[RMDB]
RNA sequence: GGGAACGACUCGAGUAGAGUCGAAAAGAUAUGGAAUCGAUGUUAACUUGGAUUUAGGGUGAAAUAUUCUAUAUCGGAAACGAUAUAGAAUACACACCCUUGUCAGUUAAGAUCGAUUCCUAAGUCACAUAGACAUGUAGUUCGCUACAUGUCUAUGAAAAGAAACAACAACAACAAC
Reactivity to DMS in 0.01 (KOAc 150mM, MgCl2 10mM, bicine 150mM(pH8.5), 24C), signal-to-noise 5, nucleotides 027 to 126: g000a050u010a300u000g000g000a020a000u000c000g020a010u000g000u000u000a020a010c000u010u020g030g000a020u000u010u000a000g030g010g020u000g000a100a120a300u000a000u000u000c010u000a000u000a000u000c000g010g000a170a090a190c000g000a010u000a000u000a010g000a020a010u000a010c300a300c000a000c000c000c010u000u000g000u000c000a040g000u000u000a000a000g010a010u000c000g000a010u000u000c000c000u000a010a060g000u000c030a260
Reactivity to 2A3 in 0.01 (KOAc 150mM, MgCl2 10mM, bicine 150mM(pH8.5), 24C), signal-to-noise 5, nucleotides 027 to 126: g030a030u080a070u240g000g020a000a000u010c000g000a000u020g160u300u010a020a020c030u130u300g300g010a080u300u300u210a030g010g030g010u030g030a230a130a080u080a000u010u000c000u000a010u000a010u000c000g020g000a090a080a010c010g000a000u000a000u010a000g010a000a000u010a000c020a000c000a000c000c040c010u000u000g010u000c000a000g000u020u010a010a010g070a040u000c000g010a000u000u000c000c010u000a000a000g000u000c010a000